[RMDB]
RNA sequence: GGGAACGACUCGAGUAGAGUCGAAAAAGUUUGUAUUAGGGCUGUUAAAUUCUCCCAGCUUAUGCCUAUUGGUGUUUACAGACGAGUAUGGUAUAGACCAUAUAUUACUAUUCUCUCUCUCAGGAGAGGAGAAUAGAUGCAUACAAAGGAGAAGCAACUAGUGCUAAUCAUUCGUGAUUAGCACUAGAAAAGAAACAACAACAACAAC
Reactivity to 2A3 in 0.01 (KOAc 150mM, MgCl2 10mM, bicine 150mM(pH8.5), 24C), signal-to-noise 2, nucleotides 027 to 156: a010g010u020u080u030g050u060a150u080u160a140g060g000g050c050u020g020u150u100a120a140a120u120u000c030u020c030c010c000a030g000c020u100u040a020u080g030c000c020u100a290u060u150g000g010u040g040u040u060u070a070c050a040g050a050c050g050a040g070u020a010u010g040g000u080a150u170a210g120a090c000c020a000u010a000u020a050u090u090a070c000u000a000u010u000c000u000c000u000c000u000c000u020c150a130g000g180a020g030a020g010g060a020g010a000a000u000a000g000a010u050g000c000a020u030a230c020a010a050a020g000g000a050g000a020a010g050c030a020a040
Reactivity to DMS in 0.01 (KOAc 150mM, MgCl2 10mM, bicine 150mM(pH8.5), 24C), signal-to-noise 2, nucleotides 027 to 156: a090g000u000u000u000g000u020a150u000u000a070g000g000g050c040u020g010u000u000a060a080a140u030u010c050u010c010c030c020a150g040c040u000u000a040u010g000c000c010u000a100u010u000g000g040u000g050u020u010u000a120c080a250g020a070c070g000a190g000u000a030u000g010g040u000a100u000a150g020a060c010c000a040u000a050u010a080u020u000a120c000u000a020u000u010c000u000c010u010c000u000c030u000c170a220g070g000a100g020a060g040g000a030g000a030a010u000a020g010a110u000g000c180a090u010a110c080a010a110a070g000g010a130g010a090a080g000c040a070a150